[RMDB]
RNA sequence: GGGAACGACUCGAGUAGAGUCGAAAAGGCGUUACUGAAAGUAUUGUGGGAAAUAAUGUGUAAAUCAUUGACCGUUCCUGCGCUGGUAAGAAUAAAAUUUUAGUCCAGACACCACCAGUAUGAUAACGUAUGUUUUAGACUUCGGUCUAAAACAUACAAAAGAAACAACAACAACAAC
Reactivity to 2A3 in 0.01 (KOAc 150mM, MgCl2 10mM, bicine 150mM(pH8.5), 24C), signal-to-noise 2, nucleotides 027 to 126: g080g050c100g090u090u050a050c030u070g080a070a100a070g070u090a070u130u140g020u070g010g000g040a020a020a040u060a020a030u010g050u000g020u030a000a060a040u050c010a000u000u040g010a020c020c010g020u060u090c020c020u030g000c000g000c000u000g010g000u050a080a000g050a060a010u150a120a160a080a100u010u120u040u020a030g020u000c000c000a000g020a050c000a010c020c010a000c000c010a030g020u040a060u140g140a120u050a100a000c030
Reactivity to DMS in 0.01 (KOAc 150mM, MgCl2 10mM, bicine 150mM(pH8.5), 24C), signal-to-noise 3, nucleotides 027 to 126: g020g030c100g000u000u000a070c030u000g020a160a130a150g000u020a050u000u000g040u000g000g000g000a150a020a050u000a020a010u000g020u010g010u000a080a060a280u010c030a020u000u010g000a020c060c000g010u000u000c020c030u020g020c060g010c060u000g020g000u000a030a030g000a060a040u010a020a080a050a300u000u010u000u000a080g000u000c010c020a040g000a220c170a110c020c000a030c060c060a000g000u010a040u000g000a040u000a060a120c140